[RMDB]
RNA sequence: GGGAACGACUCGAGUAGAGUCGAAAAUUGUUUACCAACAAGGCGCUAUUUAUGCUAAUGGUGAGUUCAUUCAAAUUCAUCCUACUGCAAUCCCUGGUGAUGAUAAACUGCGACUAAUGAGUGAAUCCUCUCAACUGACGUUCGCGUCAGUUGAGAGAAAAGAAACAACAACAACAAC
Reactivity to DMS in 0.01 (KOAc 150mM, MgCl2 10mM, bicine 150mM(pH8.5), 24C), signal-to-noise 2, nucleotides 027 to 126: u020u010g010u000u010u000a080c060c030a160a120c090a080a090g010g010c050g000c080u000a060u000u000u010a090u000g010c060u000a150a190u010g000g000u010g010a060g000u000u000c070a080u020u010c170a050a000a090u010u020c040a030u020c000c040u000a150c110u000g000c050a110a120u000c050c000c040u010g000g000u000g020a050u000g000a040u000a000a050a040c070u010g000c060g030a060c140u000a100a080u000g000a070g010u000g000a080a060u000c110
Reactivity to 2A3 in 0.01 (KOAc 150mM, MgCl2 10mM, bicine 150mM(pH8.5), 24C), signal-to-noise 1, nucleotides 027 to 126: u030u010g020u040u110u110a060c000c020a020a010c030a080a030g110g000c000g080c080u020a100u140u250u060a090u170g020c020u080a080a020u150g000g000u140g060a080g050u050u050c100a080u100u020c060a050a110a030u000u050c010a060u000c000c050u030a060c030u080g040c000a010a050u000c070c000c070u010g000g080u020g020a090u020g010a040u050a030a100a010c010u050g000c000g030a000c010u110a050a160u180g000a020g040u040g050a070a050u060c020